Description
This 207-nucleotide RNA was probed chemically with 2A3. Reactivities are given for positions 27 through 156. Conditions: 150 mM KOAc, 10 mM MgCl2 and 150 mM bicine (pH 8.5), 24 C. It was measured as part of the RMDB library OK3TST. For 2A3, 522 sequencing reads were counted. 2A3 adducts were read by reverse transcription with SuperScript II with manganese.
RNA sequence: GGGAACGACUCGAGUAGAGUCGAAAAAGCAAACCAACCAAGGCUAAUCUCCAGCCUCCAUACUGAUGGAGAACAAUUGAUGGCCAUUGUUUUCUGAGGUAUGCUCCACCCUUGGCCUUUGAUAUGUGAGUGACUCCAUCUCAGAAUUACAAAUCGAUAGUUUUACGAUCUUCGGAUCGUAAAACUAAAAAGAAACAACAACAACAAC
Reactivity to 2A3 in 0.01 (KOAc 150mM, MgCl2 10mM, bicine 150mM(pH8.5), 24C), signal-to-noise 1, nucleotides 027 to 156: a000g160c080a080a060a000c040c020a000a010c090c050a080a030g110g000c000u060a090a090u070c040u050c060c020a000g020c020c040u000c020c000a150u180a140c050u080g060a030u060g070g080a010g020a040a000c010a020a060u100u100g000a000u000g070g000c000c000a020u060u080g060u060u130u080u000c150u100g100a050g010g030u150a000u180g020c020u080c030c020a070c000c000c000u030u030g000g020c000c060u060u070u110g060a120u090a110u200g130u040g010a080g010u120g020a040c020u000c000c040a000u000c000u020c020a020g000a020a010u210u120a100c040a050a070a150u040c010g040a080